[RMDB]
RNA sequence: GGGAACGACUCGAGUAGAGUCGAAAAACUUCAUUCGUGAAGUGACUAGACCUUUGUGAGCUGGAGCGUAUGAUAAUUCGUCACGGACCCAUUGGGUCCGAAGUCGAAGCAUACGCGAUGAAAGCUCACUCUGGUGGGGGAGCACGUUCGCGUGCAACCACGACGUCUUGUUCGCAAGACGUCGUGGAAAAGAAACAACAACAACAAC
Reactivity to DMS in 0.01 (KOAc 150mM, MgCl2 10mM, bicine 150mM(pH8.5), 24C), signal-to-noise 2, nucleotides 027 to 156: a020c000u000u000c000a090u000u010c190g040u010g110a010a040g040u000g040a170c080u000a140g000a060c030c000u000u010u000g020u010g010a000g020c010u000g000g000a180g050c030g020u000a020u000g010a110u010a060a190u000u000c000g020u000c030a300c010g080g010a000c000c010c040a300u020u000g050g020g060u000c000c000g000a000a080g050u010c000g030a040a000g020c020a030u000a010c000g010c000g000a070u000g010a040a120a090g020c000u000c000a000c000u000c050u000g040g050u000g010g010g020g010g000a210g050c000a060c000g010u000u000c160g020c080g000u000g000c000a080a170
Reactivity to 2A3 in 0.01 (KOAc 150mM, MgCl2 10mM, bicine 150mM(pH8.5), 24C), signal-to-noise 2, nucleotides 027 to 156: a010c010u030u040c010a060u020u150c160g170u110g140a000a020g000u000g060a040c070u110a070g050a120c000c000u020u040u000g000u000g010a000g000c000u010g000g030a040g100c010g000u010a000u000g060a030u040a160a220u100u000c000g020u000c020a010c020g000g010a000c000c000c130a300u160u300g000g000g000u000c000c000g000a040a010g020u000c000g000a010a000g030c000a010u000a000c010g000c010g000a010u000g000a000a000a000g000c000u010c000a000c000u000c000u010g010g000u020g000g010g020g000g000a050g000c040a000c090g020u060u100c190g040c020g070u010g030c010a010a000